[RMDB]
RNA sequence: GGGAACGACUCGAGUAGAGUCGAAAAUAUAAGCUAUUUUUACAGCUUUUCUGAUUUGCUUGAUUGAUUAUAAGUGUUUUUCAGGUACCAAGCGUCACUUCAGACUCAUUUGUAAACCAUGAUACAUUAGAGAUCGUCACACUUCUAGGAUGGCAUAAGUAAUGAUACCGUUCGCGGUAUCAUUACUAAAAGAAACAACAACAACAAC
Reactivity to DMS in 0.01 (KOAc 150mM, MgCl2 10mM, bicine 150mM(pH8.5), 24C), signal-to-noise 2, nucleotides 027 to 156: u000a090u010a050a090g010c030u000a030u000u020u010u010u000a090c060a070g010c020u000u000u000u000c030u010g030a100u000u010u000g030c050u000u000g010a110u000u000g020a150u000u000a080u000a110a180g030u000g000u000u000u000u000u050c040a120g030g040u010a090c090c030a060a070g020c090g000u000c030a050c070u000u010c060a190g020a090c020u020c010a120u000u010u010g010u010a060a090a050c020c070a130u010g020a150u010a030c020a080u000u010a120g010a110g010a040u010c040g000u000c060a070c050a020c030u000u000c010u000a050g010g010a110u000g020g010c030a050u010a000
Reactivity to 2A3 in 0.01 (KOAc 150mM, MgCl2 10mM, bicine 150mM(pH8.5), 24C), signal-to-noise 4, nucleotides 027 to 156: u160a000u050a050a000g030c010u030a180u130u190u050u140u200a120c110a030g000c000u070u010u030u040c030u010g050a080u010u020u120g010c040u030u060g030a080u210u090g030a020u010u170a090u090a260a080g030u050g050u050u060u020u020u070c010a000g050g010u010a040c040c010a030a010g010c010g060u020c020a040c070u100u120c040a010g000a010c010u020c070a170u020u020u080g060u070a050a110a080c020c030a110u060g030a010u030a040c010a030u000u130a050g020a010g010a120u030c010g000u020c020a010c000a010c050u040u010c030u090a010g050g000a020u050g010g000c040a060u060a210